[RMDB]
RNA sequence: GGGAACGACUCGAGUAGAGUCGAAAACGAGAGGGACGGCUUUUCCCGGGGGAAGUUGGAGAGGGGAGAGUUUGAGAUGCCGCUGGAUGAGAUGGGGAGUGGUGUGUCCGAUCUGGACGAUGGUAUCGCUUAUUAUGAGCUUCGGCUCAUAAUAAGCAAAAGAAACAACAACAACAAC
Reactivity to DMS in 0.01 (KOAc 150mM, MgCl2 10mM, bicine 150mM(pH8.5), 24C), signal-to-noise 2, nucleotides 027 to 126: c150g000a100g000a140g000g010g020a110c110g000g010c110u010u010u000u000c020c000c020g000g010g000g000g000a070a110g020u000u000g010g010a090g000a090g020g000g020g000a080g000a070g010u010u020u010g020a080g020a090u010g030c050c020g010c080u000g000g000a060u000g000a100g000a090u000g010g000g010g000a090g010u010g020g030u000g000u010g020u000c020c020g020a110u000c110u010g000g000a050c020g020a060u000g000g030u000a090u000c120
Reactivity to 2A3 in 0.01 (KOAc 150mM, MgCl2 10mM, bicine 150mM(pH8.5), 24C), signal-to-noise 2, nucleotides 027 to 126: c050g010a040g010a040g060g000g040a040c040g040g000c000u070u110u060u070c000c010c000g000g020g010g020g010a120a080g070u210u110g040g010a060g010a070g060g010g000g000a100g000a010g010u060u160u170g070a100g000a020u070g020c010c000g000c040u020g000g050a100u070g040a070g030a070u110g020g020g000g000a060g010u070g030g010u050g020u010g010u020c000c040g020a170u070c040u090g000g000a020c030g030a040u110g050g050u070a050u140c050